[RMDB]
RNA sequence: GGGAACGACUCGAGUAGAGUCGAAAAAUAGUGAUCAAUACUUCAACUGUCGGCGGGACAUCUCCCCCAAGUGAAACGCCGAUCAAGGUACCGAAGGACCGCGUGCCUUAGUUUUACUCCUAAUGGUCGAUCUACGUGUCUUCGGACACGUAGAUCGAAAAGAAACAACAACAACAAC
Reactivity to 2A3 in 0.01 (KOAc 150mM, MgCl2 10mM, bicine 150mM(pH8.5), 24C), signal-to-noise 1, nucleotides 027 to 126: a010u160a020g100u120g070a170u050c070a000a020u100a220c020u040u020c040a090a050c030u100g000u040c000g000g000c000g010g080g000a070c020a000u030c190u170c030c070c000c000c000a020a000g000u000g050a000a000a000c000g000c020c000g010a000u000c000a030a010g040g000u000a020c040c000g010a050a060g120g070a070c000c000g000c000g010u010g000c000c000u030u070a000g000u000u080u010u160a160c140u100c010c020u050a150a070u200g100g000u030
The record gives the reactivity of an RNA of 177 nucleotides to 2A3. Reactivities are given for positions 27 through 126. 2A3 adducts were read by reverse transcription with SuperScript II with manganese.